[RMDB]
RNA sequence: GGGAACGACUCGAGUAGAGUCGAAAAUGAACAGGUGCUGCGGGAACUGGGCCAGCAACGCACCGAGCAUCUGCUGGUGGCCGGUUCGCGACCGGGCGGCCCGAUCAUCGGCUACCUCAACCUCAGCUCUUGUUUGAGAGUUCGCUCUCAAACAAGAAAAAGAAACAACAACAACAAC
Reactivity to 2A3 in 0.01 (KOAc 150mM, MgCl2 10mM, bicine 150mM(pH8.5), 24C), signal-to-noise 1, nucleotides 027 to 126: u120g020a070a060c010a060g000g060u030g000c010u060g050c090g080g050g000a030a060c040u030g040g050g000c020c000a050g050c030a100a030c050g000c050a030c050c040g020a000g000c000a020u100c070u160g000c010u020g000g000u000g070g060c020c000g000g030u070u050c050g010c020g060a120c090c080g050g040g060c050g000g040c000c000c080g010a040u030c000a070u130c020g040g000c030u060a010c000c020u070c040a040a070c020c010u090c030a040g020c030
Reactivity to DMS in 0.01 (KOAc 150mM, MgCl2 10mM, bicine 150mM(pH8.5), 24C), signal-to-noise 2, nucleotides 027 to 126: u000g010a070a120c130a040g020g010u000g000c000u000g050c060g000g010g010a030a100c090u040g030g000g000c010c000a060g010c030a070a090c170g000c060a070c110c080g000a150g050c020a080u010c120u000g000c030u010g020g020u000g020g040c050c010g000g000u000u020c110g010c060g010a110c100c070g020g000g000c030g000g000c020c000c000g000a050u010c100a030u010c070g020g020c000u000a050c020c010u000c080a100a140c040c010u020c090a130g000c110

An RNA of 177 nucleotides, treated with 2A3 and DMS and read out base by base. DMS adducts were read by reverse transcription with MarathonRT. As a SHAPE reagent, 2A3 marks flexible, mostly unpaired nucleotides at the ribose 2'-OH.